[RMDB]
RNA sequence: GGGAACGACUCGAGUAGAGUCGAAAACUCAUUCACGGUUAGGUCUGUCUCUGGCAGAGCAGACUGUCAGGAGGAUGAGGUCACCAUCUUCACGAAGCCAAAGCCAAAUUCCGCCUUGUCCUGUAAAGGGACUCCUACCAUUCGUGGUAGGAGUCCCAAAAGAAACAACAACAACAAC
Reactivity to 2A3 in 0.01 (KOAc 150mM, MgCl2 10mM, bicine 150mM(pH8.5), 24C), signal-to-noise 1, nucleotides 027 to 126: c000u010c000a010u070u030c060a020c020g050g050u150u200a020g030g050u000c000u000g100u150c000u000c000u000g270g000c280a020g010a030g020c020a000g000a030c020u030g000u000c000a060g000g080a070g070g000a030u000g000a020g050g060u080c040a050c000c030a080u050c000u010u020c000a010c070g080a030a040g000c000c000a020a080a000g000c010c000a000a140a060u180u000c000c000g070c000c030u000u000g000u000c000c000u010g000u050a000a080a080